[RMDB]
Structure probing data (DMS and 2A3) for a 177-nucleotide construct. 2A3 adducts were read by reverse transcription with SuperScript II with manganese.
RNA sequence: GGGAACGACUCGAGUAGAGUCGAAAACGGCGGGCGAUCUCUUUGUAGCUGUAGUAGGUCAUCAGGCGGACGGGCGUCGAUAUAUCCCGCAGGCGAUAGCGCAAGGUGUGGCUGCCAUUAUUGCAGAGCCGCAUUAUAGUUUCGACUAUAAUGCGGCAAAAGAAACAACAACAACAAC
Reactivity to DMS in 0.01 (KOAc 150mM, MgCl2 10mM, bicine 150mM(pH8.5), 24C), signal-to-noise 2, nucleotides 027 to 126: c060g000g000c040g060g000g040c050g000a060u000c020u010c070u000u010u010g010u000a090g010c070u020g000u000a090g000u000a070g010g010u010c040a110u000c090a070g000g020c090g020g000a120c080g000g000g000c050g000u000c030g010a070u000a090u000a110u000c030c000c000g050c160a090g010g000c030g000a060u000a070g010c110g010c070a090a100g010g020u000g040u000g010g010c000u020g030c000c080a160u020u000a100u000u000g050c070a110g020a160
Reactivity to 2A3 in 0.01 (KOAc 150mM, MgCl2 10mM, bicine 150mM(pH8.5), 24C), signal-to-noise 1, nucleotides 027 to 126: c010g060g010c040g000g040g060c030g030a150u080c080u000c000u090u070u110g090u120a050g000c040u030g030u060a010g000u020a000g000g040u020c020a100u010c040a050g000g000c000g000g020a000c000g000g050g040c020g010u030c020g010a000u040a010u000a020u170c010c000c000g000c020a030g040g020c030g050a070u060a070g030c030g000c070a050a040g030g020u050g000u010g100g030c030u020g010c000c000a120u160u160a170u040u140g060c030a020g040a000